[RMDB]
RNA sequence: GGGAACGACUCGAGUAGAGUCGAAAAUCGCGUUGGCUGCCUAAUUCAAGGAAUUAGCGUGCCUUCAUGCUAAGGGUUUGAUAUCUGCUAAAACCCGAUGCAUUCAUCAAUGCAGGUUAAGCCAAAGAAACGGCUCACGAAUUCGUUCGUGAGCCAAUCCCAGUCAAGAAUUCGUUCUUGACUGGGAAAAAGAAACAACAACAACAAC
Reactivity to DMS in 0.01 (KOAc 150mM, MgCl2 10mM, bicine 150mM(pH8.5), 24C), signal-to-noise 2, nucleotides 027 to 156: u000c030g010c050g020u000u000g020g040c050u000g020c090c010u000a030a040u000u000c020a130a180g020g020a110a050u000u010a030g020c060g050u000g000c030c010u000u010c030a040u000g030c020u000a190a220g020g010g030u000u010u000g000a200u000a050u000c080u010g000c080u000a140a010a000a040c000c000c000g000a160u010g040c000a050u000u000c080a040u000c100a140a300u010g030c020a060g000g020u000u010a060a060g000c000c010a080a110a160g010a090a120a110c110g000g000c000u000c000a010c010g010a030a080u000u000c280g010u010u000c000g040u000g000a000g010c000c000a000a010
Reactivity to 2A3 in 0.01 (KOAc 150mM, MgCl2 10mM, bicine 150mM(pH8.5), 24C), signal-to-noise 1, nucleotides 027 to 156: u070c050g020c010g030u010u010g020g000c000u030g060c070c010u030a040a030u080u050c140a230a090g190g030a090a000u000u000a010g040c070g030u010g030c030c030u020u020c060a040u060g000c000u030a010a060g000g000g020u000u000u000g040a040u030a030u150c000u080g010c030u070a000a010a010a010c000c000c030g010a030u060g000c000a030u050u210c010a070u130c080a140a100u180g000c040a030g000g010u040u160a050a080g030c050c040a160a080a000g120a050a130a040c160g000g000c000u000c010a000c000g010a000a010u050u050c050g030u130u000c000g000u030g080a000g000c000c000a000a000
Structure probing data (DMS and 2A3) for a 207-nucleotide construct. Conditions: 150 mM KOAc, 10 mM MgCl2 and 150 mM bicine (pH 8.5), 24 C. The data come from the RNA Mapping Database (RMDB), library M2RFPK. The DMS profile rests on 2,960 reads. High 2A3 reactivity points to a flexible backbone, as in loops and unpaired stretches.